[RMDB]
RNA sequence: GGGAACGACUCGAGUAGAGUCGAAAAUGUAUCGCCUGAAAUCGUCGGUAUUCAUAUCCGUUGGCGUGUUGGGUAUUGAACCGGCAGAGCCGAUCGCCAACGUCAUCUUGCAGACGAUCAGCGAUCGUGUCCAGAGUGUUUUCGAACACUCUGGACAAAAAGAAACAACAACAACAAC
Reactivity to 2A3 in 0.01 (KOAc 150mM, MgCl2 10mM, bicine 150mM(pH8.5), 24C), signal-to-noise 1, nucleotides 027 to 126: u210g030u090a020u000c040g060c050c040u050g040a160a110a060u050c020g030u000c000g000g060u070a130u090u150c060a080u060a070u140c080c020g020u000u020g000g000c040g040u090g010u060u100g070g000g050u150a230u100u170g070a150a100c060c040g060g030c000a050g020a010g130c000c040g030a060u020c000g000c000c000a000a000c000g020u030c000a040u020c020u040u100g040c030a050g010a020c000g000a050u040c000a000g000c010g000a010u010c000g020
Reactivity to DMS in 0.01 (KOAc 150mM, MgCl2 10mM, bicine 150mM(pH8.5), 24C), signal-to-noise 2, nucleotides 027 to 126: u010g020u020a000u000c030g010c110c060u000g000a090a070a070u000c030g010u000c000g000g040u000a070u030u000c080a070u000a040u000c140c030g000u000u000g010g030c060g030u010g000u020u020g000g000g010u000a130u000u010g010a100a100c090c030g010g000c020a120g000a070g040c030c010g020a020u000c000g000c020c020a000a040c010g010u010c170a040u010c100u000u010g020c040a030g000a010c000g000a020u000c090a070g000c010g000a010u000c020g040
An RNA of 177 nucleotides, treated with 2A3 and DMS and read out base by base. The 2A3 profile rests on 1,399 reads. The DMS profile rests on 1,675 reads. The reactions ran in a buffer of 150 mM KOAc, 10 mM MgCl2 and 150 mM bicine (pH 8.5), at 24 C.